[RMDB]
RNA sequence: GGGAACGACUCGAGUAGAGUCGAAAACAUAAGGAAGGUGACUGAAGCCGGCUCGGUUAGAGCAAAAACACAAACGCUAACAAAAUCGUUAGUUUCUCCCGUCAAACAGCACUAGUUGCCGCUUGAUAAUGACAACUUUUUUCGAAAAGUUGUCAUUAAAAGAAACAACAACAACAAC
Reactivity to DMS in 0.01 (KOAc 150mM, MgCl2 10mM, bicine 150mM(pH8.5), 24C), signal-to-noise 5, nucleotides 027 to 126: c070a090u050a080a110g010g010a070a070g030g010u000g000a090c060u000g010a130a130g010c060c030g000g000c010u000c020g010g010u020u050a100g030a050g020c030a010a060a060a130a110c160a050c150a060a050a090c140g000c020u010a020a030c060a080a080a080a110u030c160g000u030u000a030g010u000u000u010c030u000c040c020c030g010u000c070a040a040a040c050a030g000c020a030c020u010a080g000u020u000g000c020c060g010c040u000u000g020a110u030
Reactivity to 2A3 in 0.01 (KOAc 150mM, MgCl2 10mM, bicine 150mM(pH8.5), 24C), signal-to-noise 7, nucleotides 027 to 126: c040a060u220a110a020g110g030a100a040g020g020u030g050a070c030u050g030a070a020g030c010c010g010g000c000u020c010g140g040u140u190a050g010a000g020c020a030a050a020a070a000c120a010c030a040a110a010c070g000c010u060a040a010c040a050a100a090a220u190c080g000u020u020a010g000u010u090u030c030u010c010c010c000g020u030c030a050a070a070c010a020g030c020a010c050u090a040g050u070u030g020c010c010g010c010u020u030g020a030u090

The record gives the reactivity of an RNA of 177 nucleotides to DMS and 2A3. For 2A3 the reverse transcriptase was SuperScript II with manganese. Values cover nucleotides 27 to 126. DMS adducts were read by reverse transcription with MarathonRT. Reactivities are rounded to 0.1 and cut off at 0 and 3. It was measured as part of the RMDB libraries RFM100 and RFMREP. The RNA was probed in 150 mM KOAc, 10 mM MgCl2 and 150 mM bicine (pH 8.5) at 24 C.